[RMDB]
RNA sequence: GGGAACGACUCGAGUAGAGUCGAAAAGCGGCUGUUGAAGCAGGGGAAGCGUGUCGAGGAAGCGGCAAUGAUCUCGUAAACCAUAUGUCGCAAAAAAUAAUCGCCAAUACCAAGAGCGAUUCCCAGUCCUUCGCCCUCGCUGCCUAAUAAGCAGUGACAUAUAUCUGAUGUUCGCAUCAGAUAUAUGAAAAGAAACAACAACAACAAC
Reactivity to 2A3 in 0.01 (KOAc 150mM, MgCl2 10mM, bicine 150mM(pH8.5), 24C), signal-to-noise 9, nucleotides 027 to 156: g060c040g030g000c040u050g030u100u070g070a080a020g040c060a030g020g000g000g000a010a020g030c050g040u050g060u070c030g030a050g040g020a090a020g010c000g010g000c010a010a020u020g020a060u020c070u040c150g170u230a070a070a070c040c000a010u120a120u090g000u000c000g000c000a000a030a040a030a020a050u220a020a020u040c020g000c040c010a060a050u120a210c030c040a100a020g030a010g030c010g000a010u020u020c000c010c000a020g050u060c010c000u040u040c040g180c020c010c000u000c010g000c000u000g000c000c000u090a130a070u200a120a010g000c000a000g010u010g030a000
Reactivity to DMS in 0.01 (KOAc 150mM, MgCl2 10mM, bicine 150mM(pH8.5), 24C), signal-to-noise 3, nucleotides 027 to 156: g010c040g010g030c010u000g040u000u010g010a050a110g030c080a110g000g000g010g020a070a030g010c040g000u010g020u000c050g010a180g010g040a170a220g010c010g010g030c020a080a030u000g010a010u000c030u000c300g010u000a060a020a020c000c000a030u000a130u000g040u010c010g040c010a000a010a070a030a050a110u000a070a080u000c040g040c040c020a060a150u000a300c120c090a090a150g000a110g000c010g000a050u000u000c020c010c010a230g000u010c040c020u000u010c020g000c010c010c040u010c020g000c010u010g000c000c000u000a110a100u010a080a050g000c020a010g000u000g010a110
Chemical mapping of a 207-nucleotide RNA with 2A3 and DMS. For DMS the reverse transcriptase was MarathonRT. Reactivities are rounded to 0.1 and cut off at 0 and 3.